The record gives the reactivity of an RNA of 177 nucleotides to 2A3 and DMS. For 2A3, 3,912 sequencing reads were counted. The RNA was probed in 150 mM KOAc, 10 mM MgCl2 and 150 mM bicine (pH 8.5) at 24 C. For DMS the reverse transcriptase was MarathonRT.
[RMDB]
RNA sequence: GGGAACGACUCGAGUAGAGUCGAAAACUUAACACUAUCGACUCCAUAAUGACCCAUCAGUCAAACGGUAUAUCUCAAACGACUACGGUUUACUCCAAAUUCAUUGGCUAGUUGAGGCCAAGAAACACACCCUAUUAUUCUUCGGAAUAAUAGGGUGAAAAGAAACAACAACAACAAC
Reactivity to 2A3 in 0.01 (KOAc 150mM, MgCl2 10mM, bicine 150mM(pH8.5), 24C), signal-to-noise 4, nucleotides 027 to 126: c000u040u100a050a020c030a050c100u070a050u100c030g040a040c010u030c000c020a070u070a150a130u230g050a070c000c020c040a070u050c030a030g070u030c030a040a010a080c050g000g020u070a070u020a060u100c030u010c070a170a140a030c050g060a020c030u060a020c040g040g000u010u080u040a050c040u010c020c010a030a060a140u110u080c070a140u070u050g000g010c010u030a070g150u170u130g120a080g040g020c000c010a000a010g020a010a030a000c090a010
Reactivity to DMS in 0.01 (KOAc 150mM, MgCl2 10mM, bicine 150mM(pH8.5), 24C), signal-to-noise 4, nucleotides 027 to 126: c100u000u010a080a120c120a080c070u000a060u000c040g000a110c050u010c020c070a040u010a080a050u010g020a130c030c040c020a090u000c110a050g000u000c070a070a050a050c080g000g000u000a040u010a080u010c030u000c060a100a070a100c130g000a030c070u000a040c090g010g010u010u000u000a090c070u000c060c060a040a090a100u000u000c080a100u000u000g010g010c010u010a090g010u000u000g010a130g010g000c000c020a010a030g010a060a050a070c220a160